The record gives the reactivity of an RNA of 177 nucleotides to 2A3 and DMS.
Conditions: 150 mM KOAc, 10 mM MgCl2 and 150 mM bicine (pH 8.5), 24 C.
DMS adducts were read by reverse transcription with MarathonRT.
2A3 adducts were read by reverse transcription with SuperScript II with manganese.
[RMDB]
RNA sequence: GGGAACGACUCGAGUAGAGUCGAAAACGCAUGCUGACGCUAGAAGUGUUAUAUAUUGGAUAGAGAAUAUAAUUGUUCGUUGCGCACUCAGAUGCGGGGACACCUAUGUUCUCAGUGAUUGCCACAGACUACCCCUCCUCUUCGGAGGAGGGGUAGUAAAAGAAACAACAACAACAAC
Reactivity to 2A3 in 0.01 (KOAc 150mM, MgCl2 10mM, bicine 150mM(pH8.5), 24C), signal-to-noise 2, nucleotides 027 to 126: c010g000c010a010u180g060c010u030g000a010c030g000c020u000a030g100a300a060g100u110g080u270u060a050u010a040u000a030u040u290g040g020a050u120a190g120a000g060a100a000u000a000u010a030a030u000u060g050u080u030c050g010u040u150g070c090g000c000a110c040u110c000a040g120a250u000g010c000g000g000g010g000a000c030a010c000c020u000a020u030g010u000u000c010u000c000a010g030u010g180a050u000u120g040c060c000a030c000a040g040
Reactivity to DMS in 0.01 (KOAc 150mM, MgCl2 10mM, bicine 150mM(pH8.5), 24C), signal-to-noise 1, nucleotides 027 to 126: c070g000c170a050u000g000c100u000g000a010c000g000c040u000a130g000a010a000g080u000g020u040u000a040u030a030u060a090u030u000g080g010a050u000a160g000a010g000a050a000u000a000u000a000a090u000u000g060u000u000c000g000u030u010g000c090g050c050a030c170u000c170a140g040a160u000g000c080g030g000g030g000a030c060a040c080c090u090a020u030g000u000u000c000u000c000a240g030u000g000a180u000u000g000c020c020a090c100a020g000